[RMDB]
RNA sequence: GGGAACGACUCGAGUAGAGUCGAAAACAACGACCAAUCACCUGGUCAUGGACGGCGAGUCUAAUGUAAAGGUGGGAGACAAGUCUAAUGGCUAUAAGAUUGACCCUGCUGCUUUUAUCCAAGCAUCGUGCACCCUGGUAUUCGUACCAGGGUGCACAAAAGAAACAACAACAACAAC
Reactivity to 2A3 in 0.01 (KOAc 150mM, MgCl2 10mM, bicine 150mM(pH8.5), 24C), signal-to-noise 2, nucleotides 027 to 126: c050a060a010c060g010a020c000c040a000a080u300c160a130c070c000u000g030g000u000c070a120u080g020g020a000c010g000g110c040g060a060g060u020c020u110a010a300u070g030u180a060a060a060g010g000u040g000g000g060a000g000a000c210a270a000g020u010c000u160a190a000u170g000g050c000u000a000u070a210a130g130a120u120u150g030a060c060c020c040u000g000c030u080g020c100u030u080u060u050a120u050c060c040a110a040g170c060a020u090c210
Structure probing data (2A3) for a 177-nucleotide construct. Conditions: 150 mM KOAc, 10 mM MgCl2 and 150 mM bicine (pH 8.5), 24 C. For 2A3, 559 sequencing reads were counted.